[RMDB]
This 207-nucleotide RNA was probed chemically with DMS and 2A3.
The RNA was probed in 150 mM KOAc, 10 mM MgCl2 and 150 mM bicine (pH 8.5) at 24 C.
It was measured as part of the RMDB library OK3TST.
Values cover nucleotides 27 to 156.
For DMS, 4,311 sequencing reads were counted.
RNA sequence: GGGAACGACUCGAGUAGAGUCGAAAAAUAUUGCUGAUGAUGUCGCUGGUCAGCCCGAUCUGUGGCAGAACAAGCGGGACGGACGCUGCUUCUCGAACGACGGCGGUAAGACGUACCACAACAUCGAUGAUCCUCGAAAGGGUGAUUGGCGAAGUUCAUGGAUAUACAACUUCGGUUGUAUAUCCAUAAAAGAAACAACAACAACAAC
Reactivity to DMS in 0.01 (KOAc 150mM, MgCl2 10mM, bicine 150mM(pH8.5), 24C), signal-to-noise 2, nucleotides 027 to 156: a120u000a040u010u000g050c010u000g030a110u010g020a090u010g010u000c020g030c000u010g020g010u000c010a120g040c040c010c020g010a210u020c060u010g000u010g050g030c020a090g010a110a080c070a090a210g030c000g000g010g020a120c050g020g020a120c060g010c010u000g000c040u020u000c140u010c120g010a120a210c110g000a050c000g020g000c000g040g000u010a120a120g020a180c000g010u010a030c000c010a020c000a050a080c060a110u000c020g010a150u000g000a050u000c300c020u010c080g020a100a110a250g000g000g010u020g010a050u000u000g010g040c000g050a050a110g000u000u010c060
Reactivity to 2A3 in 0.01 (KOAc 150mM, MgCl2 10mM, bicine 150mM(pH8.5), 24C), signal-to-noise 3, nucleotides 027 to 156: a000u150a050u080u080g040c040u060g010a120u040g020a020u100g070u070c000g000c000u010g000g020u030c070a130g180c020c000c000g030a030u000c060u140g060u090g070g000c040a030g040a080a060c080a100a000g000c040g010g000g030a010c000g020g010a000c030g000c010u010g010c030u110u030c070u040c120g110a110a070c160g060a000c030g010g050c020g000g010u030a070a040g070a050c010g010u060a170c020c000a050c050a110a060c030a040u050c020g000a010u070g040a070u070c000c010u020c040g030a060a020a010g000g000g010u010g010a030u000u020g000g000c030g010a050a020g000u030u090c040